[RMDB]
Record summary: Chemical mapping of a 177-nucleotide RNA with DMS and 2A3.
RNA sequence: GGGAACGACUCGAGUAGAGUCGAAAAGAUAUGGAAUGAUGACGGAGCGAUAAGCUGGUGUCGGAAACGACACCCAGCUUUUGACGCUCCGGUCAUUCCUAAGUCAAAAGCCGUGUUCGCACGGCAAGAUUUACAGUGUGUUCGCACACUGUAAAUCAAAAGAAACAACAACAACAAC
Reactivity to DMS in 0.01 (KOAc 150mM, MgCl2 10mM, bicine 150mM(pH8.5), 24C), signal-to-noise 5, nucleotides 027 to 126: g020a040u000a300u000g000g000a010a000u000g000a010u000g010a280c020g030g010a010g010c010g020a120u000a010a020g010c000u000g010g010u000g010u000c000g010g000a070a100a220c010g010a010c010a010c120c060c070a000g010c010u000u000u000u010g010a260c100g000c000u000c000c000g000g000u000c000a010u000u000c000c010u000a030a100g010u010c030a090a080a120a140g020c000c010g030u000g010u000u020c260g010c010a000c000g010g010c010a030a010
Reactivity to 2A3 in 0.01 (KOAc 150mM, MgCl2 10mM, bicine 150mM(pH8.5), 24C), signal-to-noise 4, nucleotides 027 to 126: g020a020u070a040u140g000g010a010a000u000g010a010u050g160a090c020g010g000a000g030c060g060a090u020a190a010g000c000u000g010g020u010g000u000c000g000g020a050a050a020c010g000a000c010a000c020c010c010a000g000c000u060u010u010u060g100a080c110g000c000u000c000c000g000g010u000c000a000u000u000c000c000u000a060a010g040u020c030a040a030a100a130g000c010c000g020u010g060u040u120c300g010c080a000c000g000g020c000a010a010
The DMS profile rests on 7,151 reads.